About this RNA: Conditions: 150 mM KOAc, 10 mM MgCl2 and 150 mM bicine (pH 8.5), 24 C. Structure probing data (2A3 and DMS) for a 177-nucleotide construct.

RNA sequence: GGGAACGACUCGAGUAGAGUCGAAAAGAUAUGGACGAGCCGAUAAGUCGGUGUCGGAAACGACACCCGACUUUUGACGGCUCCGUGUCCUAAGUCAAAGUUCAUUUACCUUCGGGUAAAUGAACAACUCUACUUAUUGCUUCGGCAAUAAGUAGAGAAAAGAAACAACAACAACAAC
Reactivity to 2A3 in 0.01 (KOAc 150mM, MgCl2 10mM, bicine 150mM(pH8.5), 24C), signal-to-noise 2, nucleotides 027 to 126: g000a020u050a030u080g000g000a010c020g000a000g000c000c000g060a140u160a300a010g010u000c000g020g000u010g000u010c000g000g020a060a010a020c010g000a000c010a020c000c030c050g010a010c000u050u040u080u170g070a050c000g000g000c000u000c000c000g040u080g020u020c000c000u040a050a020g030u010c070a180a060a090g000u020u000c000a010u000u010u010a010c000c000u020u060c230g050g000g000u010a010a000a010u010g010a000a000c000a000a000
Reactivity to DMS in 0.01 (KOAc 150mM, MgCl2 10mM, bicine 150mM(pH8.5), 24C), signal-to-noise 3, nucleotides 027 to 126: g010a050u000a160u020g000g000a030c030g020a020g020c000c010g000a140u000a020a040g010u000c010g000g010u000g020u000c010g020g010a040a050a120c010g020a000c000a010c070c100c040g040a000c000u000u000u000u010g010a220c080g010g000c010u000c020c300g040u020g010u000c000c010u000a030a110g020u000c040a120a120a160g010u000u000c000a010u000u000u000a010c000c010u000u010c240g010g000g000u000a000a010a000u000g000a010a000c000a050a080